[RMDB]
Structure probing data (DMS and 2A3) for a 177-nucleotide construct. The RNA was probed in 150 mM KOAc, 10 mM MgCl2 and 150 mM bicine (pH 8.5) at 24 C. Values cover nucleotides 27 to 126.
RNA sequence: GGGAACGACUCGAGUAGAGUCGAAAAGGCCGAAUGAGACCGUAUCUUGGUUACUCUGUUCUCGGAGGUCUUCUGUCCGGUGUGAAACCGAGAGGCACCUCUCUUGUGCCAGAUACUUGAAGUGCACCAAGCACACACCCUUCGGGGUGUGUGCUUGAAAAGAAACAACAACAACAAC
Reactivity to DMS in 0.01 (KOAc 150mM, MgCl2 10mM, bicine 150mM(pH8.5), 24C), signal-to-noise 2, nucleotides 027 to 126: g020g010c030c020g010a070a100u030g000a060g010a060c070c040g060u000a050u010c000u000u050g010g020u020u010a010c010u000c150u020g000u020u000c010u010c090g000g010a140g000g000u000c000u010u000c030u000g020u040c170c030g000g000u000g020u120g030a050a100a100c020c010g000a030g000a010g000g020c140a060c000c020u010c100u020c080u110u050g020u000g000c000c010a060g010a090u010a030c040u030u090g000a050a030g010u050g090c020a080c170
Reactivity to 2A3 in 0.01 (KOAc 150mM, MgCl2 10mM, bicine 150mM(pH8.5), 24C), signal-to-noise 2, nucleotides 027 to 126: g010g000c010c000g000a030a150u220g000a040g040a070c020c020g000u060a100u060c090u110u300g020g000u170u100a020c050u000c020u200g090u180u010c040u000c000g020g000a010g000g000u030c000u040u000c000u000g190u000c020c030g000g000u040g000u020g140a200a000a030c010c000g080a050g050a100g080g000c110a040c020c010u000c000u000c000u090u060g000u000g010c000c000a000g040a020u140a020c020u050u110g140a200a040g030u140g000c000a030c000